[RMDB]
RNA sequence: GGGAACGACUCGAGUAGAGUCGAAAAGAUAUGGAUCCACUGAGCUUUUGACGUUCGAUAUUCGGAAACGAAUAUACCGAACGAUAAGCUCGUGGAUCCUAAGUCAAAACACCGGUUCGCCGGUGAAGAUAUUACCUCAGUUCGCUGAGGUAAUAUCAAAAGAAACAACAACAACAAC
Reactivity to 2A3 in 0.01 (KOAc 150mM, MgCl2 10mM, bicine 150mM(pH8.5), 24C), signal-to-noise 9, nucleotides 027 to 126: g030a010u040a030u100g000g000a000u000c020c020a030c170u300g000a010g020c020u130u160u300u300g300a180c130g000u000u010c010g000a000u000a000u010u010c000g000g020a010a040a040c010g020a010a000u010a000u050a280c120c060g000a010a000c000g010a010u070a070a000g010c000u000c000g000u000g010g000a000u000c000c000u000a000a000g000u000c000a000a020a100a100c000a000c000c010g020g050u080u060c300g060c090c000g010g000u010g000a010a010
Reactivity to DMS in 0.01 (KOAc 150mM, MgCl2 10mM, bicine 150mM(pH8.5), 24C), signal-to-noise 8, nucleotides 027 to 126: g000a040u010a300u010g000g010a010u000c000c010a010c010u020g030a020g010c000u000u000u010u010g020a240c110g010u010u000c000g020a060u000a000u000u000c010g010g010a110a080a170c010g010a020a000u000a020u000a070c300c030g000a010a010c000g010a110u010a010a020g010c000u010c000g030u000g000g000a000u000c000c000u000a010a050g000u000c020a120a120a130a240c010a010c010c000g010g000u000u010c300g030c000c000g000g010u000g010a040a090